[RMDB]
This 177-nucleotide RNA was probed chemically with 2A3 and DMS. For 2A3 the reverse transcriptase was SuperScript II with manganese. The reactions ran in a buffer of 150 mM KOAc, 10 mM MgCl2 and 150 mM bicine (pH 8.5), at 24 C.

RNA sequence: GGGAACGACUCGAGUAGAGUCGAAAAGAGCAUUACCGCCGAAUGUAUUUGGCGAUCAACCGGACAUCUCACGUGGAGGCGUUGACGCUAAAUUUCAUUCGCGAGCCAUGCGCACCUGGCCUGCGCCCAUCCAUGCUGUGUUCGCACAGCAUGGAUGAAAAGAAACAACAACAACAAC
Reactivity to 2A3 in 0.01 (KOAc 150mM, MgCl2 10mM, bicine 150mM(pH8.5), 24C), signal-to-noise 9, nucleotides 027 to 126: g050a020g000c010a030u030u070a070c030c010g070c090c090g010a000a000u000g000u040a020u010u010u020g020g000c030g170a300u020c000a000a010c030c030g010g070a050c050a190u040c040u010c020a130c240g130u290g070g020a020g040g040c050g000u000u000g010a000c000g000c000u010a000a000a000u230u230u080c000a000u000u000c010g000c010g000a010g020c020c020a030u030g000c020g000c010a060c030c020u020g030g010c000c040u120g010c070g020c050c020
Reactivity to DMS in 0.01 (KOAc 150mM, MgCl2 10mM, bicine 150mM(pH8.5), 24C), signal-to-noise 4, nucleotides 027 to 126: g000a140g000c020a020u010u010a120c140c040g040c100c070g020a020a000u000g000u010a000u000u000u000g000g010c000g000a140u010c000a020a000c070c090g000g050a260c070a090u020c040u020c140a180c300g020u040g000g010a140g010g010c180g010u010u000g000a010c020g000c010u010a000a010a010u000u010u000c000a010u020u010c030g000c010g010a080g000c150c110a030u020g000c010g000c050a070c010c020u000g000g000c000c030u010g000c050g000c050c050

Background: The data come from the RNA Mapping Database (RMDB), library OK1LIB.